[RMDB]
An RNA of 207 nucleotides, treated with 2A3 and read out base by base. The 2A3 profile rests on 1,047 reads. Values cover nucleotides 27 to 156.
RNA sequence: GGGAACGACUCGAGUAGAGUCGAAAAGAGACUCCCUCUCUAAUUAGAAAAAGAGAGAGAGAGAGAGGAAGAAAGGAAAGAAGGCAGGCGAGGGAGGGAAAGAUAGAAAACAGGGAAUCUAACUGCCACCUAACAAAUUAAACUGCUGACAGUCAAGAGCAAGUAGUAUCUUCGGAUACUACUUGCUAAAAGAAACAACAACAACAAC
Reactivity to 2A3 in 0.01 (KOAc 150mM, MgCl2 10mM, bicine 150mM(pH8.5), 24C), signal-to-noise 2, nucleotides 027 to 156: g030a010g030a020c010u000c000c060c010u020c000u000c000u000a240a270u250u220a100g100a090a130a020a100a000g000a000g010a000g000a000g000a000g000a000g010a000g000a000g000g030a020a020g040a020a080a000g080g000a090a040a090g040a010a020g010g050c050a020g000g030c060g080a070g000g020g020a060g050g010g000a000a100a000g020a000u060a100g110a010a060a000a010c040a020g000g030g030a020a000u070c000u030a050a030c020u040g000c020c000a000c030c040u070a090a030c020a050a070a070u200u220a160a140a030c020u050g040c020u060g120a080c130a020g100u220c050a060a040g200